Chemical mapping of a 177-nucleotide RNA with DMS and 2A3. 2A3 adducts were read by reverse transcription with SuperScript II with manganese.
[RMDB]
RNA sequence: GGGAACGACUCGAGUAGAGUCGAAAAGGAAAUCAAAAUUAGUGAAGUGAAGGCUGAGAUUAGAAAGGUAAUGAAGGUAGGAUAUUGUCACUGGUUUACGGUAACCACCACCACCAAAAUAAAAAAACAAACAAACGUUGUUCGCAACGUUUGUUUGAAAAGAAACAACAACAACAAC
Reactivity to DMS in 0.01 (KOAc 150mM, MgCl2 10mM, bicine 150mM(pH8.5), 24C), signal-to-noise 1, nucleotides 027 to 126: g000g010a090a090a050u000c100a060a030a160a070u010u010a040g000u000g000a030a110g000u010g010a070a140g020g030c030u000g000a060g000a110u000u000a100g000a050a010a110g010g050u020a030a040u020g000a100a080g000g030u000a030g020g030a060u000a030u000u000g020u000c050a040c040u000g010g000u000u000u020a030c110g050g000u000a050a000c010c000a060c030c040a000c030c080a100c090c030a000a050a050a080u080a010a030a080a060a060a090a130
Reactivity to 2A3 in 0.01 (KOAc 150mM, MgCl2 10mM, bicine 150mM(pH8.5), 24C), signal-to-noise 1, nucleotides 027 to 126: g040g020a020a160a020u170c070a080a000a080a020u080u130a060g040u020g080a110a010g010u040g060a030a030g050g000c030u040g010a010g030a160u030u080a030g150a030a080a000g030g010u090a040a040u000g020a010a020g000g060u020a030g060g050a000u050a060u090u170g060u060c020a000c110u000g020g100u040u090u040a060c060g000g050u020a040a000c010c020a010c020c000a020c000c010a020c010c000a000a040a060a000u300a090a110a000a000a000a000a000
For DMS, 759 sequencing reads were counted. DMS adducts were read by reverse transcription with MarathonRT. For 2A3, 710 sequencing reads were counted.